Source: RMDB library 15KLIB, as collected in RNAgym. Structure probing data (DMS and 2A3) for a 170-nucleotide construct. The 2A3 profile rests on 104,084 reads. For DMS, 95,861 sequencing reads were counted. The reactions ran in a buffer of 150 mM KOAc, 10 mM MgCl2 and 150 mM bicine (pH 8.5), at 24 C. 2A3 adducts were read by reverse transcription with SuperScript II with manganese.

RNA sequence: GGGAACGACUCGAGUAGAGUCGAAAAAGAUUGUACAACCCAUCACUUUCUAACUUUGCGUUAGCAUUGUGCAGUGGUGUAAUGUGGUUGUACACUUAUAGCAUUGGAGAAGCCUCAAGCCCCAUUGAAAGCAUGAAGUUCGCUUCAUGCAAAAGAAACAACAACAACAAC
Reactivity to DMS in 0.01 (KOAc 150mM, MgCl2 10mM, bicine 150mM(pH8.5), 24C), signal-to-noise 9, nucleotides 027 to 129: a030g020a040u020u020g000u010a000c000a000a000c000c000c000a010u000c010a010c000u030u060u060c010u000a150a030c010u000u000u000g000c020g050u040u050a060g000c000a000u010u030g000u000g010c200a040g040u020g010g020u010g030u050a050a050u000g000u040g050g000u010u020g030u000a020c000a020c040u000u000a060u010a090g010c060a060u020u010g010g000a070g020a100a110g000c020c010u020c060a070a070g000c030c010c010c040a090u010u010g000a100a100a110
Reactivity to 2A3 in 0.01 (KOAc 150mM, MgCl2 10mM, bicine 150mM(pH8.5), 24C), signal-to-noise 9, nucleotides 027 to 129: a000g080a050u080u060g000u000a000c000a000a000c000c000c000a000u010c000a000c010u130u300u150c010u030a030a020c000u010u000u030g010c030g170u150u180a070g000c010a000u000u020g010u050g040c080a030g030u010g020g020u010g020u070a090a070u080g100u230g020g000u000u000g010u000a000c000a000c000u010u030a040u080a060g050c050a080u020u070g060g010a080g020a120a010g060c010c000u030c010a020a020g020c000c000c000c010a020u050u190g110a110a060a010